[RMDB]
RNA sequence: GGGAACGACUCGAGUAGAGUCGAAAAGAGGUUACGUUCGCGUAACCUCAAAGAUAGUGGAAAUCACCGAAAUAAAACGGUGCCGGCCACAAAAACCGGAAAAAAGAAGCGACUUCGGUCGCUUCAAGAAAGUAUGAUUGUUCGCAAUCAUACUUUCAAAAGAAACAACAACAACAAC
Reactivity to DMS in 0.01 (KOAc 150mM, MgCl2 10mM, bicine 150mM(pH8.5), 24C), signal-to-noise 2, nucleotides 027 to 126: g000a010g020g020u000u000a000c000g000u000u020c160g050c030g040u000a000a000c000c010u000c000a010a080a070g000a130u010a120g000u010g000g010a070a120a180u000c000a000c000c010g020a080a080a180u020a060a160a120a120c010g010g000u000g010c110c300g010g000c020c000a030c020a050a110a070a120a140c030c020g010g010a000a060a080a120a110a120g000a010a010g000c000g000a030c000u000u010c140g030g000u000c000g000c000u010u000c010a020a070
Reactivity to 2A3 in 0.01 (KOAc 150mM, MgCl2 10mM, bicine 150mM(pH8.5), 24C), signal-to-noise 1, nucleotides 027 to 126: g010a010g030g010u010u000a000c020g000u020u010c080g010c000g080u010a010a000c000c000u000c000a000a000a000g000a010u150a030g000u010g010g060a040a050a090u120c000a000c000c000g040a100a220a020u220a060a150a030a010c010g020g000u000g020c040c010g080g000c000c020a030c060a020a130a000a000a100c010c050g020g000a100a030a000a020a000a040g010a000a000g000c010g000a000c020u010u080c270g010g000u000c000g000c000u000u000c000a010a000
Record summary:
The record gives the reactivity of an RNA of 177 nucleotides to DMS and 2A3. Conditions: 150 mM KOAc, 10 mM MgCl2 and 150 mM bicine (pH 8.5), 24 C. The DMS profile rests on 1,621 reads. DMS adducts were read by reverse transcription with MarathonRT. Reactivities are given for positions 27 through 126. It was measured as part of the RMDB library M2PK50.